[RMDB]
RNA sequence: GGGAACGACUCGAGUAGAGUCGAAAAGCAAUGCAAAUAGCAACCGGUAUAGCAAUACCUAUAGCAAUAGGCAUAGCAGGGUGCGUCAGGCCUUAUUGGUUGAGGUACUUAUACAGUGUGGUGCGCCCAAUACCGAGACGGCGAGCAACCUCUGCUACCCCGAGGUAGUAUUCGUACUACCUCGGGGAAAAGAAACAACAACAACAAC
Reactivity to 2A3 in 0.01 (KOAc 150mM, MgCl2 10mM, bicine 150mM(pH8.5), 24C), signal-to-noise 1, nucleotides 027 to 156: g050c010a070a040u080g010c010a090a070a070u090a120g050c010a000a190c030c040g090g000u090a050u090a030g080c030a050a050u070a060c000c020u030a010u130a080g050c040a060a090u020a040g010g010c110a050u080a040g000c010a010g000g010g000u030g030c030g070u120c110a040g000g190c000c000u170u280a070u030u010g000g130u110u040g000a060g130g130u170a030c050u060u090a040u050a180c060a050g030u020g010u030g180g010u020g010c000g050c010c000c000a010a060u070a010c000c000g010a070g000a020c020g010g000c010g030a010g000c020a000a300c000c070u170c000u080g000c000u000a000